[RMDB]
RNA sequence: GGGAACGACUCGAGUAGAGUCGAAAAGUGAGAAAAAUUAGCAUUCAAAUCUAUAAAAGUUAGAUGACAUUGUAGAACCGGUUACCUAAAUGAGCGAUAGAGUGCUUCGGUAGUAAAAAUAUCUUUCUUAUGUACGUCGAUUCGUCGACGUACAUAAAAAAGAAACAACAACAACAAC
Reactivity to DMS in 0.01 (KOAc 150mM, MgCl2 10mM, bicine 150mM(pH8.5), 24C), signal-to-noise 1, nucleotides 027 to 126: g000u050g000a220g000a040a040a050a060a010u000u050a080g080c050a000u010u070c020a050a050a130u000c000u030a070u040a030a120a210a210g000u000u000a030g000a050u000g000a160c050a060u000u020g000u020a080g000a130a130c080c000g000g070u010u000a000c040c020u000a070a010a020u000g000a160g050c130g000a050u000a080g000a010g070u000g020c000u000u000c100g000g000u020a040g010u030a030a010a020a150a100u100a000u010c000u000u000u000c010
Reactivity to 2A3 in 0.01 (KOAc 150mM, MgCl2 10mM, bicine 150mM(pH8.5), 24C), signal-to-noise 2, nucleotides 027 to 126: g190u170g030a120g040a000a100a020a020a040u130u080a010g000c010a010u040u000c040a030a120a100u060c010u020a020u180a130a050a120a020g130u060u020a040g030a090u030g010a040c010a070u140u210g040u090a110g010a120a040c050c050g000g010u060u030a040c020c030u080a100a040a000u130g010a000g020c020g030a010u080a060g010a000g000u070g060c000u000u030c020g050g010u050a090g060u040a050a030a030a030a030u060a030u040c000u010u030u000c010

The data come from the RNA Mapping Database (RMDB), library RFM100. Structure probing data (DMS and 2A3) for a 177-nucleotide construct. For DMS the reverse transcriptase was MarathonRT. High DMS reactivity at an A or C suggests that its Watson-Crick edge is free. The reactions ran in a buffer of 150 mM KOAc, 10 mM MgCl2 and 150 mM bicine (pH 8.5), at 24 C. Reactivities are rounded to 0.1 and cut off at 0 and 3.